[RMDB]
RNA sequence: GGGAACGACUCGAGUAGAGUCGAAAAGAUAAUCCUCAUGGCAGAGCCUGUGCACAAGUGUUUAGAUCGAAUCUUCUAGCCCUUUGGUGUCUUAAUAGGAACAAUUUACGUUAUGGAGUUGGGGAAGGUGGCAUUGAGGUCAAUGAAUGGGACUGCAUAGCAUAUAAUUAUUCGUAAUUAUAUGCUAAAAAGAAACAACAACAACAAC
Reactivity to 2A3 in 0.01 (KOAc 150mM, MgCl2 10mM, bicine 150mM(pH8.5), 24C), signal-to-noise 3, nucleotides 027 to 156: g050a030u120a060a100u040c000c000u050c040a070u060g070g000c030a020g020a010g100c020c030u030g020u050g010c040a030c060a080a080g010u030g020u110u140u170a080g010a080u110c100g060a100a060u020c000u050u020c030u080a050g000c030c000c010u060u040u130g050g000u050g050u000c020u080u160a170a100u070a150g030g000a030a010c010a020a020u060u110u130a070c080g030u010u040a070u160g040g020a060g040u070u050g040g000g000g010a020a020g050g020u040g010g000c020a000u000u060g030a020g020g020u040c020a060a030u120g050a060a060u040g000g000g020a010c010u030g000c000a040
Reactivity to DMS in 0.01 (KOAc 150mM, MgCl2 10mM, bicine 150mM(pH8.5), 24C), signal-to-noise 3, nucleotides 027 to 156: g020a180u000a090a130u000c010c010u000c040a110u000g030g020c040a060g000a130g040c000c000u010g010u000g020c050a070c080a070a090g030u000g010u010u000u000a060g010a080u000c040g010a080a190u010c040u000u000c020u000a180g020c030c040c050u000u000u010g040g010u000g010u000c040u000u000a050a130u000a110g020g020a080a090c050a070a100u000u000u010a070c080g010u000u010a100u000g030g000a080g020u010u000g010g000g010g000a070a050g000g040u000g010g020c030a100u000u000g020a060g020g010u000c040a030a090u000g000a050a100u020g010g000g000a110c030u000g010c060a240